This 207-nucleotide RNA was probed chemically with DMS and 2A3. Values cover nucleotides 27 to 156. For DMS, 3,825 sequencing reads were counted. 2A3 adducts were read by reverse transcription with SuperScript II with manganese. The data come from the RNA Mapping Database (RMDB), library RNAMAK.
[RMDB]
RNA sequence: GGGAACGACUCGAGUAGAGUCGAAAACAGAAGUUCGCUUCUGAGUGCAUCCUAAGUCAAACCAACAGCUACCAUACUCGCGACGAUCUGUCGGAAACGACAGGGAGCGAGUGGUAGACAUGGUUUGAUAUGGAAAUAAGUUCGGUUCGCCGAACAAAUUCUGGUACUACUUCGGUAGUACCAGAAUAAAAGAAACAACAACAACAAC
Reactivity to DMS in 0.01 (KOAc 150mM, MgCl2 10mM, bicine 150mM(pH8.5), 24C), signal-to-noise 2, nucleotides 027 to 156: c050a030g000a070a170g030u000u010c250g030c020u000u000c010u020g000a200g020u020g010c150a170u010c010c020u000a070a250g010u000c000a010a020a010c000c000a030a080c090a300g020c000u000a000c010c010a050u030a100c040u000c000g030c000g010a090c210g000a020u020c010u000g000u000c000g000g000a130a100a180c020g030a010c000a000g020g000g000a060g030c000g010a000g050u000g000g020u000a020g060a050c070a300u010g000g020u000u000u010g000a010u000a250u000g020g000a020a100a130u000a070a160g000u030u010c020g000g030u000u000c230g020c040c010g000a030a010c000a020a070
Reactivity to 2A3 in 0.01 (KOAc 150mM, MgCl2 10mM, bicine 150mM(pH8.5), 24C), signal-to-noise 5, nucleotides 027 to 156: c010a000g010a010a010g030u080u200c210g050c130u010u010c010u020g070a090g090u170g120c040a090u050c000c000u030a120a040g010u010c000a010a000a000c000c000a020a090c040a140g020c010u000a000c000c000a060u070a290c010u000c000g030c000g060a300c000g000a110u000c000u000g000u010c000g050g020a100a090a060c000g000a000c000a000g010g010g000a010g000c000g000a000g000u000g000g000u000a000g040a120c020a060u030g000g000u000u010u000g000a000u000a020u020g000g100a020a090a110u230a250a050g010u000u010c000g000g060u030u080c290g000c080c000g020a000a010c010a010a080